An RNA of 207 nucleotides, treated with DMS and 2A3 and read out base by base. Reactivities are rounded to 0.1 and cut off at 0 and 3. Conditions: 150 mM KOAc, 10 mM MgCl2 and 150 mM bicine (pH 8.5), 24 C. High 2A3 reactivity points to a flexible backbone, as in loops and unpaired stretches. It was measured as part of the RMDB library OK3TST.
RNA sequence: GGGAACGACUCGAGUAGAGUCGAAAAUGACACUUGAGGUGAGUACAUGCUGGUGACACUAUGUCACUAGUUGUGAGUACAUGGUGGAGACACUAUGUACUCACAAGCAGUCUAGGACUGCUUAUGUACUCACAAGCAGUAAGUGUCUGCUUGACGACGUUACCUCGUAUUUCGAUACGAGGUAACGAAAAGAAACAACAACAACAAC
Reactivity to DMS in 0.01 (KOAc 150mM, MgCl2 10mM, bicine 150mM(pH8.5), 24C), signal-to-noise 3, nucleotides 027 to 156: u000g020a040c000a030c030u000u000g000a170g030g000u000g000a020g000u000a000c010a020u000g010c020u010g010g030u000g000a030c000a220c160u010a140u000g030u000c000a010c010u000a000g020u000u010g030u010g010a030g000u000a020c000a010u000g020g030u020g010g000a300g000a300c000a010c000u010a000u000g020u000a000c010u010c000a010c000a000a010g000c000a020g010u000c020u000a140g070g010a050c010u000g020c000u000u000a000u010g000u000a020c020u000c010a020c010a020a050g040c100a150g000u010a050a050g000u000g010u000c010u000g000c040u000u000g010a120c040g030a280
Reactivity to 2A3 in 0.01 (KOAc 150mM, MgCl2 10mM, bicine 150mM(pH8.5), 24C), signal-to-noise 7, nucleotides 027 to 156: u140g000a010c010a000c010u030u040g070a040g100g090u010g000a000g000u000a000c000a000u010g000c010u010g010g010u010g010a000c010a030c130u290a200u300g000u000c000a000c000u000a000g000u000u030g000u000g000a000g000u010a000c000a000u000g010g000u010g000g020a050g010a020c000a000c000u000a000u000g000u000a000c000u000c000a000c000a000a000g010c000a000g000u000c100u250a080g090g210a020c000u000g010c000u020u000a000u000g000u000a000c000u010c010a000c000a000a000g000c020a030g060u190a070a000g000u000g000u020c010u010g030c040u090u150g050a090c110g020a010